[RMDB]
RNA sequence: GGGAACGACUCGAGUAGAGUCGAAAAAGUCAUGGCGCUAGGAUCGCAGGAUCGCUAGGCUAGGCAUGAUCGGUACACUAGUACAUGUCACUAGGUACACUAGCAUGAGUCUAGCACAUGGCUAGACCCUAGCGAUGCCAUUCGUGGCAUCGCUAGGAAAAGAAACAACAACAACAAC
Reactivity to 2A3 in 0.01 (KOAc 150mM, MgCl2 10mM, bicine 150mM(pH8.5), 24C), signal-to-noise 2, nucleotides 027 to 126: a010g070u090c030a040u070g040g010c080g000c090u040a040g070g000a040u040c040g040c190a050g090g190a030u020c040g000c140u010a010g000g000c020u010a040g020g000c010a030u050g020a070u110c100g010g010u090a070c300a140c070u040a030g030u080a020c130a220u180g220u230c000a010c030u010a010g030g020u060a010c170a080c050u010a030g060c010a020u040g040a000g000u000c000u000a000g000c000a020c000a130u020g010g010c020u000a010g070a070c000
Reactivity to DMS in 0.01 (KOAc 150mM, MgCl2 10mM, bicine 150mM(pH8.5), 24C), signal-to-noise 3, nucleotides 027 to 126: a050g020u000c020a040u000g000g020c130g010c010u030a060g000g000a020u000c020g010c300a150g000g000a020u000c010g000c020u000a010g010g020c060u000a070g000g030c030a040u020g000a120u010c190g010g000u000a000c030a090c030u010a010g010u000a120c240a150u010g030u020c170a020c030u000a000g000g000u000a010c020a120c030u000a040g000c030a040u000g000a110g000u000c010u000a000g020c010a070c090a070u000g000g000c000u000a040g010a070c100
Chemical mapping of a 177-nucleotide RNA with 2A3 and DMS. For DMS the reverse transcriptase was MarathonRT. Conditions: 150 mM KOAc, 10 mM MgCl2 and 150 mM bicine (pH 8.5), 24 C.